[RMDB]
This 177-nucleotide RNA was probed chemically with DMS and 2A3. The 2A3 profile rests on 2,102 reads. The reactions ran in a buffer of 150 mM KOAc, 10 mM MgCl2 and 150 mM bicine (pH 8.5), at 24 C. For DMS the reverse transcriptase was MarathonRT. Reactivities are given for positions 27 through 126.
RNA sequence: GGGAACGACUCGAGUAGAGUCGAAAACUCUCACUCUGUGGCUACCUUGACGGCGCCCACAAUUGUGAAUCAAGAGAGGUAUGUUAAAAUUACUGGGUUGUACCCAACCAUUACGGUACCUGAAGAGCGAUUAACCAUAGUUCGCUAUGGUUAAUCGAAAAGAAACAACAACAACAAC
Reactivity to DMS in 0.01 (KOAc 150mM, MgCl2 10mM, bicine 150mM(pH8.5), 24C), signal-to-noise 4, nucleotides 027 to 126: c020u000c050u000c010a070c020u010c100u000g030u000g000g010c050u000a090c000c010u000u030g030a100c210g010g000c160g030c300c010c010a020c030a030a120u000u010g020u000g000a070a080u000c140a060a080g010a100g000a030g000g010u000a010u010g000u000u020a070a050a090a060u000u000a080c090u000g000g010g020u010u010g020u000a300c000c030c020a040a060c060c120a090u000u010a060c100g010g010u000a020c030c020u000g010a070a120g010a120g000
Reactivity to 2A3 in 0.01 (KOAc 150mM, MgCl2 10mM, bicine 150mM(pH8.5), 24C), signal-to-noise 2, nucleotides 027 to 126: c010u030c000u010c000a010c010u000c040u020g020u010g000g000c030u040a080c030c010u010u090g150a080c090g010g040c010g020c030c050c000a010c010a030a180u060u050g040u020g050a010a090u110c120a170a050g070a010g010a020g080g000u030a060u060g040u040u130a110a130a130a170u100u080a040c050u030g030g000g000u030u060g050u160a120c010c000c010a000a020c020c010a020u080u170a040c070g010g000u010a000c000c020u020g050a080a030g000a040g170